[RMDB]
RNA sequence: GGGAACGACUCGAGUAGAGUCGAAAAAGUAGGCAAUUUUACAUAGCAGGUGUUUACAAUAAUGGCAUCAGCCUCCUCUUCAGUGGAGACAAGCCCGAUAUUGUUUUCAUUCAAUAUCCCUGCCAUACCACGGACUAUUAUUCGUAAUAGUCCGUGGAAAAGAAACAACAACAACAAC
Reactivity to 2A3 in 0.01 (KOAc 150mM, MgCl2 10mM, bicine 150mM(pH8.5), 24C), signal-to-noise 3, nucleotides 027 to 126: a000g170u170a070g020g020c040a030a050u050u020u090u210a150c140a250u250a050g110c110a040g010g060u010g030u040u120u070a040c040a040a020u140a120a050u120g020g010c040a060u040c040a140g010c010c000u010c000c000u090c030u240u170c110a090g080u090g070g010a010g010a010c020a030a030g040c000c040c000g110a060u010a010u100u020g040u020u030u010u070c050a050u070u040c030a060a060u060a050u130c000c000c020u020g020c000c000a060u080a090
Reactivity to DMS in 0.01 (KOAc 150mM, MgCl2 10mM, bicine 150mM(pH8.5), 24C), signal-to-noise 3, nucleotides 027 to 126: a080g000u010a080g010g000c050a120a060u020u020u010u030a070c200a070u010a100g020c050a060g010g020u000g010u000u010u020a030c060a020a020u010a080a120u010g000g030c000a120u040c300a100g020c010c010u000c010c000u000c090u030u040c210a130g000u010g000g000a020g000a050c000a120a060g010c070c000c060g020a120u020a020u000u000g000u000u010u000u000c020a060u010u030c070a040a090u020a100u000c020c000c000u010g000c000c020a080u030a170